[RMDB]
RNA sequence: GGGAACGACUCGAGUAGAGUCGAAAAGGUCACCGACACGGUGCUGCCGUUGGGCACCGUGUAGCUGCGGGUCUCGCCGACCUUGGCGUCGAUCAGGGCCCCACCGAGCGGUGAAUUCGGCGAGUAGCUCCGCCAUAGAAUUCGUUCUAUGGCGGAGAAAAGAAACAACAACAACAAC
Reactivity to DMS in 0.01 (KOAc 150mM, MgCl2 10mM, bicine 150mM(pH8.5), 24C), signal-to-noise 3, nucleotides 027 to 126: g000g010u000c000a020c030c030g020a110c020a000c020g000g010u000g000c010u010g000c070c180g020u010u020g010g000g000c000a010c000c020g030u010g010u000a010g010c120u010g010c120g000g000g000u000c010u010c010g020c020c000g010a180c030c010u000u000g010g000c060g030u010c190g010a150u000c050a040g000g000g020c040c010c000c010a070c020c040g000a110g020c040g020g020u000g000a040a110u000u000c020g010g020c000g010a040g020u010a170g010
Reactivity to 2A3 in 0.01 (KOAc 150mM, MgCl2 10mM, bicine 150mM(pH8.5), 24C), signal-to-noise 2, nucleotides 027 to 126: g030g030u050c000a000c040c000g030a000c000a000c030g000g020u010g000c010u110g070c100c140g210u240u300g040g010g010c010a000c020c040g000u000g000u000a000g000c040u070g050c110g030g020g020u000c010u020c010g000c000c010g010a030c010c060u010u030g050g000c050g150u170c080g050a280u070c000a000g030g040g040c010c050c000c000a010c020c000g080a050g050c050g000g000u020g000a020a070u070u090c010g020g000c000g000a020g000u040a010g040

An RNA of 177 nucleotides, treated with DMS and 2A3 and read out base by base.
Values cover nucleotides 27 to 126.
For 2A3 the reverse transcriptase was SuperScript II with manganese.